[RMDB]
RNA sequence: GGGAACGACUCGAGUAGAGUCGAAAACGCUGGGUGUAGGCAUGAUGACCGGGAGCAGCUGAAGCGCGCACGGCUGCGAAGAACGCAAGUGCUGGGCACCUGUGCUGAAGCGCGCACGGCAACCGAAAGGUGCGAAACGGCGGUUUCGACCGCCGAAUGUAAUUCAGAAAUUCGUUUCUGAAUUACAAAAAGAAACAACAACAACAAC
Reactivity to DMS in 0.01 (KOAc 150mM, MgCl2 10mM, bicine 150mM(pH8.5), 24C), signal-to-noise 1, nucleotides 027 to 156: c050g060c040u000g000g040g050u000g020u000a300g020g020c000a050u000g020a100u000g010a120c120c000g080g010g000a200g010c000a050g000c030u000g010a090a140g010c040g000c000g000c000a300c000g000g130c030u000g020c030g020a140a140g000a100a140c060g010c070a110a280g020u000g000c000u000g010g000g030c020a000c000c000u000g000u000g000c060u000g030a080a060g000c090g070c010g060c000a180c040g020g000c040a100a160c040c010g000a020a150a160g000g050u010g010c050g010a020a030a080c000g050g000c020g030g040u030u000u000c190g010a040c000c010g020c000c000g030a010a010
Reactivity to 2A3 in 0.01 (KOAc 150mM, MgCl2 10mM, bicine 150mM(pH8.5), 24C), signal-to-noise 4, nucleotides 027 to 156: c040g000c020u050g000g010g010u030g000u080a130g030g010c020a020u070g080a170u130g080a090c180c130g020g030g060a070g000c010a000g010c000u010g030a180a030g000c000g000c000g000c010a010c010g010g000c000u000g000c020g010a080a050g050a100a030c060g010c110a180a200g020u010g010c000u050g040g290g000c000a000c000c000u010g000u040g030c010u040g010a100a030g030c000g000c010g000c010a020c010g000g010c010a010a040c010c010g040a050a030a050g000g010u010g020c010g000a090a140a020c010g000g020c010g000g050u040u150u100c160g080a040c000c000g000c000c000g000a010a000
This 207-nucleotide RNA was probed chemically with DMS and 2A3. It was measured as part of the RMDB library RNAMAK. Reactivities are given for positions 27 through 156. The 2A3 profile rests on 3,860 reads. For 2A3 the reverse transcriptase was SuperScript II with manganese.